[RMDB]
RNA sequence: GGGAACGACUCGAGUAGAGUCGAAAAGUAAUAGAUAACUGGAUGCAGCGUAGGAUGCAACGCAUAUCCAGUACGAAUGGUACCUGUAAAUAAAAUAUGUAUCCUAGUACAAGUACCAACAGAAGGAUAAGCGAUGGUGAUGUCAAUCACAUUUGCAGGUAGGUAGUCGUUUCGACGACUACCUACCAAAAGAAACAACAACAACAAC
Reactivity to 2A3 in 0.01 (KOAc 150mM, MgCl2 10mM, bicine 150mM(pH8.5), 24C), signal-to-noise 1, nucleotides 027 to 156: g030u090a010a180u040a210g070a010u160a120a010c000u000g000g000a000u060g090c210a100g010c250g000u020a030g060g010a090u020g000c040a040a040c000g000c000a000u000a030u080c000c000a000g000u010a000c000g090a010a120u070g090g000u000a000c020c000u000g020u080a000a070a180u240a100a000a080a020u040a030u180g000u040a000u060c000c000u020a020g010u000a000c000a010a030g030u000a050c000c000a000a100c010a000g210a130a020g070g000a060u050a170a030g000c010g040a060u030g040g000u030g000a060u000g130u150c010a080a000u000c000a010c030a040u080u110u100g000c010a010